[RMDB]
RNA sequence: GGGAACGACUCGAGUAGAGUCGAAAAUUCCAUUGACCCACUGCUCGAGGACGUCCUCCCUGUCUCCUCGGUUCUUCUUCGAUCCGGACCGGCUCAUCUCGGCAAAAGGCGGCAGUCCUCAGUACUCGCAACCGUGGCUUCGGCCACGGUAAAAGAAACAACAACAACAAC
Reactivity to 2A3 in 0.01 (KOAc 150mM, MgCl2 10mM, bicine 150mM(pH8.5), 24C), signal-to-noise 2, nucleotides 027 to 129: u080u050c050c020a020u000u070g020a000c000c010c000a130c080u020g030c020u000c000g010a020g010g090a080c000g020u030c000c040u040c010c000c000u040g020u030c050u030c010c000u020c020g070g000u060u010c000u110u000c020u050u050c010g060a110u000c020c020g010g030a020c010c010g030g000c030u040c010a070u010c020u010c000g020g000c040a010a040a090a070g020g000c000g000g000c070a000g050u000c000c000u020c020a010g010u000a040c030u020c060g060c010a010
Reactivity to DMS in 0.01 (KOAc 150mM, MgCl2 10mM, bicine 150mM(pH8.5), 24C), signal-to-noise 4, nucleotides 027 to 129: u060u080c120c100a060u070u040g020a060c020c050c140a110c030u000g060c010u000c050g040a060g030g020a180c000g010u010c000c050u010c080c000c000u000g000u030c000u000c010c050u030c010g040g050u020u040c120u000u000c050u040u060c040g030a120u020c100c040g060g000a060c080c080g000g000c040u040c090a020u020c050u030c000g000g010c050a120a030a050a060g000g030c080g050g000c130a060g010u000c000c000u020c070a080g030u030a000c000u190c000g040c070a050
An RNA of 170 nucleotides, treated with 2A3 and DMS and read out base by base.
For DMS the reverse transcriptase was MarathonRT.
For 2A3 the reverse transcriptase was SuperScript II with manganese.
For 2A3, 4,227 sequencing reads were counted.
It was measured as part of the RMDB library 15KLIB.
The reactions ran in a buffer of 150 mM KOAc, 10 mM MgCl2 and 150 mM bicine (pH 8.5), at 24 C.